[RMDB]
RNA sequence: GGGAACGACUCGAGUAGAGUCGAAAAGAAGGGCGUCGUGAACACAGUUAAGUGGCUCGUCUGUAGCUCCCGGAGGUGAGUACACCUCUACGUAUAUGGGGCGAUGAGGGGUCAAGAAGACUGGCAUGUAUUCUCAAUUCUUCGGAAUUGAGAAUACAAAAGAAACAACAACAACAAC
Reactivity to DMS in 0.01 (KOAc 150mM, MgCl2 10mM, bicine 150mM(pH8.5), 24C), signal-to-noise 5, nucleotides 027 to 126: g010a100a070g000g010g020c020g030u000c020g020u010g010a160a180c080a140c020a050g000u000u000a120a240g020u000g000g000c010u000c020g010u010c010u000g010u010a300g000c020u000c000c000c120g010g000a020g010g020u000g020a300g030u000a140c060a000c000c000u000c010u000a030c240g010u000a090u010a120u010g010g000g000g010c010g000a130u000g000a040g000g010g010g000u000c010a040a050g000a080a210g000a030c020u000g000g030c170a140u010
Reactivity to 2A3 in 0.01 (KOAc 150mM, MgCl2 10mM, bicine 150mM(pH8.5), 24C), signal-to-noise 3, nucleotides 027 to 126: g090a020a090g040g020g000c010g030u030c040g010u050g030a070a010c070a000c010a010g030u040u090a130a080g050u040g040g010c010u010c010g300u000c090u020g100u090a010g010c000u020c040c000c020g020g000a000g030g000u020g020a120g180u160a120c010a010c030c000u000c010u020a030c010g020u020a030u010a080u280g020g000g000g010c000g000a030u050g000a020g010g010g020g010u000c010a000a000g040a070a000g030a020c010u010g040g000c050a050u100
Conditions: 150 mM KOAc, 10 mM MgCl2 and 150 mM bicine (pH 8.5), 24 C. Chemical mapping of a 177-nucleotide RNA with DMS and 2A3. It was measured as part of the RMDB library RFMREP. 2A3 adducts were read by reverse transcription with SuperScript II with manganese.